[RMDB]
An RNA of 177 nucleotides, treated with DMS and 2A3 and read out base by base. For 2A3 the reverse transcriptase was SuperScript II with manganese. For 2A3, 2,006 sequencing reads were counted. The RNA was probed in 150 mM KOAc, 10 mM MgCl2 and 150 mM bicine (pH 8.5) at 24 C.
RNA sequence: GGGAACGACUCGAGUAGAGUCGAAAAGAAGAGCAGGCAGAUAAUCUUGUGCAGUAUGCAUGCUCGUAACUCCAGCGCACAAGUGGAAGCACAAGAUUUAAAUCCAGCAUAGCGCAGGAGCCGCAGAGGGCAUGAUGAUAUUCGUAUCAUCAUGCCCAAAAGAAACAACAACAACAAC
Reactivity to DMS in 0.01 (KOAc 150mM, MgCl2 10mM, bicine 150mM(pH8.5), 24C), signal-to-noise 2, nucleotides 027 to 126: g000a110a110g010a000g000c000a000g030g010c010a020g040a130u010a090a100u050c020u010u010g000u000g020c010a250g010u000a110u000g000c000a070u000g020c000u000c000g010u040a100a250c020u000c000c000a050g030c020g000c040a080c240a070a100g010u000g060g010a140a150g010c060a000c010a000a000g000a100u030u020u000a060a050a140u000c000c000a050g030c190a120u020a090g000c010g020c080a050g000g010a020g010c020c050g040c180a060g020a170
Reactivity to 2A3 in 0.01 (KOAc 150mM, MgCl2 10mM, bicine 150mM(pH8.5), 24C), signal-to-noise 2, nucleotides 027 to 126: g100a140a040g000a000g010c000a070g060g000c000a010g000a120u070a060a010u080c030u000u020g000u000g030c000a030g090u160a040u060g000c010a000u020g000c000u000c000g000u000a010a010c020u000c000c000a050g020c000g010c000a020c050a110a190g060u020g060g000a090a010g000c010a000c000a000a010g000a000u030u010u090a040a050a030u010c000c000a000g050c050a260u140a110g000c020g000c010a020g000g030a000g020c050c020g090c030a020g030a150